[RMDB]
RNA sequence: GGGAACGACUCGAGUAGAGUCGAAAAUGUCGCCGUCUUUCGCCUGCAAAUACCAGCCUUGAUUCUCGACGGAUGGAUCGGUACCAGCUCUGUUGUCAUGGUGAAGGUUGCCGAUGUCUAUUGUAAGCGUGCUAGUCCGAUUCGUCGGACUAGCACGAAAAGAAACAACAACAACAAC
Reactivity to DMS in 0.01 (KOAc 150mM, MgCl2 10mM, bicine 150mM(pH8.5), 24C), signal-to-noise 1, nucleotides 027 to 126: u020g000u000c030g010c040c020g030u000c020u010u000u010c030g020c010c000u000g040c050a070a100a070u010a100c100c020a080g000c020c080u000u030g000a110u000u000c030u000c030g030a080c080g000g000a100u010g010g000a020u000c030g000g020u000a030c020c030a110g020c030u000c040u010g020u000u000g020u010c150a030u000g000g050u000g000a130a070g000g010u000u000g040c020c020g050a060u000g000u010c030u000a100u000u000g010u000a160a080g010
Notes
The record gives the reactivity of an RNA of 177 nucleotides to DMS. Source: RMDB library OK2TST, as collected in RNAgym. For DMS the reverse transcriptase was MarathonRT. Reactivities are given for positions 27 through 126. The DMS profile rests on 1,243 reads.